[RMDB]
RNA sequence: GGGAACGACUCGAGUAGAGUCGAAAAGAAAGGCAGCCAUUGCAGCCCACGGAGCCAGUCGAAGCAUGCUUUUGCAUGCCGCCCACGACUGAGGGCAGCUGCGGCACUGAGGGCAGCUGCCGAAAGACCACUGAUAUGGCUUCGGCCAUAUCAGUGGAAAAGAAACAACAACAACAAC
Reactivity to DMS in 0.01 (KOAc 150mM, MgCl2 10mM, bicine 150mM(pH8.5), 24C), signal-to-noise 2, nucleotides 027 to 126: g000a100a080a160g010g000c010a050g020c060c190a190u010u000g000c260a130g000c020c000c000a090c090g000g000a090g010c000c020a020g030u000c050g030a120a110g040c010a000u000g030c000u000u010u000u040g000c020a000u000g000c010c070g030c070c000c050a300c030g020a110c140u000g010a110g010g040g060c000a120g030c040u000g010c100g010g000c000a070c100u000g010a110g000g000g010c000a150g000c000u000g000c000c000g030a030a060a050g000a200
Reactivity to 2A3 in 0.01 (KOAc 150mM, MgCl2 10mM, bicine 150mM(pH8.5), 24C), signal-to-noise 2, nucleotides 027 to 126: g090a020a070a000g030g000c030a000g010c040c040a110u030u300g060c080a040g000c010c020c000a010c050g000g030a010g040c050c010a030g020u140c040g080a070a000g000c010a000u010g000c000u130u170u110u300g000c020a010u000g000c020c010g000c000c020c010a160c060g210a080c110u110g030a200g020g040g000c010a000g020c000u080g010c000g080g000c060a020c050u040g050a090g010g030g000c010a000g000c010u010g010c000c000g000a000a020a000g030a010
The record gives the reactivity of an RNA of 177 nucleotides to DMS and 2A3. For DMS, 1,118 sequencing reads were counted. The RNA was probed in 150 mM KOAc, 10 mM MgCl2 and 150 mM bicine (pH 8.5) at 24 C.